[RMDB]
This 177-nucleotide RNA was probed chemically with DMS and 2A3. The reactions ran in a buffer of 150 mM KOAc, 10 mM MgCl2 and 150 mM bicine (pH 8.5), at 24 C. DMS adducts were read by reverse transcription with MarathonRT. Values are in units of 0.01, from 0 to 300, in steps of 10.
RNA sequence: GGGAACGACUCGAGUAGAGUCGAAAACUCACCGCCACGGACCGUAAACCCCUGAACGGAGGGGCGUCAGCAGUAGCUAGUGGCAUCAGUUACUGCUGUAAACCCGUAGAGUUCAGGAGAUUGGGGUGCUUUAGGAUUAUUUCGAUAAUCCUAAAGCAAAAGAAACAACAACAACAAC
Reactivity to DMS in 0.01 (KOAc 150mM, MgCl2 10mM, bicine 150mM(pH8.5), 24C), signal-to-noise 6, nucleotides 027 to 126: c050u010c050a140c070c040g020c070c050a070c070g000g010a080c020c030g010u020a030a100a100c040c030c000c010u000g010a020a000c000g000g020a280g010g000g000g000c040g000u000c000a000g000c000a000g010u000a000g010c000u010a070g030u000g030g010c120a070u020c050a010g000u000u000a000c000u000g010c000u000g000u020a040a080a080c000c000c010g010u030a230g020a160g000u000u000c010a010g010g010a020g000a070u000u010g000g000g010g030u020
Reactivity to 2A3 in 0.01 (KOAc 150mM, MgCl2 10mM, bicine 150mM(pH8.5), 24C), signal-to-noise 9, nucleotides 027 to 126: c010u010c010a070c010c020g060c030c010a060c050g060g040a060c010c020g050u060a050a060a080c000c010c000c000u000g000a000a000c010g040g090a060g020g010g000g010c000g050u020c000a000g000c000a000g000u000a000g010c000u040a040g040u060g190g050c030a060u070c010a020g000u010u000a000c000u000g020c010u000g010u020a160a210a020c000c000c000g010u050a050g030a010g100u000u000c000a000g030g010a030g010a020u060u140g020g010g010g050u040